Chemical mapping of a 177-nucleotide RNA with DMS and 2A3. The data come from the RNA Mapping Database (RMDB), library OK2TRN. DMS (dimethyl sulfate) methylates the pairing face of unpaired adenines and cytosines. For 2A3 the reverse transcriptase was SuperScript II with manganese.

RNA sequence: GGGAACGACUCGAGUAGAGUCGAAAAUCUGCGGAUUGCCGCGCUCCGCGACCCUGUAUCUCGACGACGAGCCGCUCUGCACGCUGCGGCUCGUGAUACGCGAAGUCGAGCGUUGCGACGACGGCGAAGUGCCUAGUAGUUUCGACUACUAGGCACUAAAAGAAACAACAACAACAAC
Reactivity to DMS in 0.01 (KOAc 150mM, MgCl2 10mM, bicine 150mM(pH8.5), 24C), signal-to-noise 4, nucleotides 027 to 126: u010c090u010g020c040g000g000a070u010u020g020c010c000g010c010g010c190u010c010c020g000c020g000a100c020c070c030u000g010u010a080u000c040u000c020g000a040c030g000a040c030g000a030g010c030c000g020c020u000c070u010g010c100a060c110g020c150u000g000c010g010g010c000u000c000g000u010g010a110u010a060c160g030c130g010a090a110g020u000c030g010a020g000c230g020u010u010g010c030g000a190c090g010a090c020g010g010c000g010a120
Reactivity to 2A3 in 0.01 (KOAc 150mM, MgCl2 10mM, bicine 150mM(pH8.5), 24C), signal-to-noise 1, nucleotides 027 to 126: u050c040u110g060c000g000g000a080u060u120g050c010c000g020c030g000c040u010c020c010g040c010g030a090c000c000c080u030g030u030a140u070c040u000c030g080a070c010g020a000c000g010a000g000c040c000g010c010u050c060u150g160c060a060c100g050c050u050g020c020g060g000c000u000c000g000u000g000a030u050a060c080g050c040g100a080a070g010u010c000g010a000g010c040g060u080u070g060c040g040a120c030g020a050c020g030g000c020g020a080
For DMS, 5,960 sequencing reads were counted.